[RMDB]
RNA sequence: GGGAACGACUCGAGUAGAGUCGAAAAGACGCCUUUAGAAGAAGAGGCUAGGGGGUAUUCAGGUGUGGGAUACUUAGUAAUAUGCAACGCUAAUUGCAUAAGAUUGUAGGACGGAAUUUACAGUCUUUAGAGAUAAGCACGUUCGCGUGCUUAUCAAUGGAGAGUAUUUGUUCGCAAAUACUCUCCAAAAAGAAACAACAACAACAAC
Reactivity to DMS in 0.01 (KOAc 150mM, MgCl2 10mM, bicine 150mM(pH8.5), 24C), signal-to-noise 3, nucleotides 027 to 156: g000a180c130g010c030c000u000u010u010a090g020a160a190g000a170a130g010a030g010g030c010u000a120g010g000g000g020g000u000a100u010u010c090a060g020g010u010g020u010g020g000g020a110u000a050c080u000u010a120g000u000a070a140u000a040u000g010c020a030a030c080g020c120u000a030a100u000u000g010c010a040u000a050a070g020a040u010u000g010u000a030g000g020a140c030g000g030a070a260u000u000u000a040c010a040g010u000c000u000u010u000a130g000a170g010a020u000a000a010g020c010a020c000g010u010u020c300g000c030g020u000g000c000u000u000a010u000c010a040a110
Reactivity to 2A3 in 0.01 (KOAc 150mM, MgCl2 10mM, bicine 150mM(pH8.5), 24C), signal-to-noise 3, nucleotides 027 to 156: g080a010c030g000c000c000u040u090u090a180g020a300a000g030a050a000g000a010g020g000c030u060a080g020g030g000g010g050u080a200u090u170c080a020g030g000u160g060u150g200g030g000a020u070a110c000u040u070a030g010u060a020a150u020a060u090g010c020a000a000c030g020c120u110a050a070u100u030g000c000a000u020a000a040g020a050u050u030g000u010a000g010g030a000c070g050g040a040a030u060u050u050a020c030a000g010u000c000u010u050u030a120g020a000g000a060u000a000a000g000c000a000c000g020u020u030c060g020c010g050u000g010c000u000u000a000u000c000a000a000
The record gives the reactivity of an RNA of 207 nucleotides to DMS and 2A3. Reactivities are given for positions 27 through 156. The RNA was probed in 150 mM KOAc, 10 mM MgCl2 and 150 mM bicine (pH 8.5) at 24 C.